[RMDB]
RNA sequence: GGGAACGACUCGAGUAGAGUCGAAAAGAUAUGGAGUGUGAACUACGAUAUACGUUGAGCGACGAUCAACAUUUAGUCGGAAACGACUAAAUGUUGGGAGCUCAACAUAUCGCACACUCCUAAGUCAGUUUUAAUAUGCCUUCGGGCAUAUUAAAACAAAAGAAACAACAACAACAAC
Reactivity to DMS in 0.01 (KOAc 150mM, MgCl2 10mM, bicine 150mM(pH8.5), 24C), signal-to-noise 2, nucleotides 027 to 126: g000a020u010a300u000g000g000a070g020u010g010u000g000a140a080c140u030a300c020g020a030u000a020u000a170c300g000u000u010g000a000g010c000g020a120c300g000a050u000c000a010a020c000a010u000u000u000a000g000u010c000g000g000a090a080a260c010g020a010c000u000a010a030a000u000g000u000u000g000g000g000a060g010c000u000c000a000a010c000a020u000a000u000c010g000c000a010c020a000c000u000c020c000u000a000a060g010u000c070a100
Reactivity to 2A3 in 0.01 (KOAc 150mM, MgCl2 10mM, bicine 150mM(pH8.5), 24C), signal-to-noise 2, nucleotides 027 to 126: g020a040u110a080u180g000g000a000g000u060g010u040g060a120a100c120u190a040c300g030a000u020a020u030a120c110g000u000u020g000a010g020c050g300a300c060g010a100u040c030a000a030c000a000u000u000u000a000g010u010c000g030g020a050a080a070c000g000a000c000u010a000a000a000u000g030u000u010g000g000g010a020g000c000u020c000a000a000c010a000u010a010u000c000g050c000a000c000a000c000u000c000c000u000a010a000g030u000c010a000